[RMDB]
RNA sequence: GGGAACGACUCGAGUAGAGUCGAAAACAUUUUUAGACUACAUACCAUCAGUCCACGAGUACGCAAACGCAGUGACGCUCAGGGAACUCUGCGGAUCUAAUAUCAUCUGUAGACUUGGAUCACCGUACGCCAUCGUUUAAUUCGUUAAACGAUGGCGAAAAGAAACAACAACAACAAC
Reactivity to DMS in 0.01 (KOAc 150mM, MgCl2 10mM, bicine 150mM(pH8.5), 24C), signal-to-noise 1, nucleotides 027 to 126: c000a110u000u000u000u040u010a060g010a120c080u010a060c030a050u000a050c090c020a020u000c070a030g010u010c010c040a140c180g030a070g010u010a080c160g060c150a070a050a170c090g020c000a080g040u020g000a070c100g000c020u010c050a020g010g000g010a070a120c120u000c020u000g000c000g000g010a060u000c070u000a030a020u020a170u000c110a050u000c060u020g010u000a020g000a070c230u000u000g000g010a120u010c060a100c080c060g000u000a170
Reactivity to 2A3 in 0.01 (KOAc 150mM, MgCl2 10mM, bicine 150mM(pH8.5), 24C), signal-to-noise 2, nucleotides 027 to 126: c000a080u060u070u050u130u150a040g030a070c090u090a040c080a100u140a050c000c040a050u070c000a000g040u020c020c000a060c070g060a050g030u080a000c080g010c040a060a100a030c030g050c080a060g010u020g080a020c080g000c040u020c080a040g010g050g040a050a020c030u020c020u050g050c030g030g020a010u080c010u050a130a080u060a060u180c050a010u050c040u070g210u160a000g060a080c030u060u040g000g030a010u020c010a020c120c000g050u100a020
Chemical mapping of a 177-nucleotide RNA with DMS and 2A3. Source: RMDB library OK2TST, as collected in RNAgym. For DMS the reverse transcriptase was MarathonRT.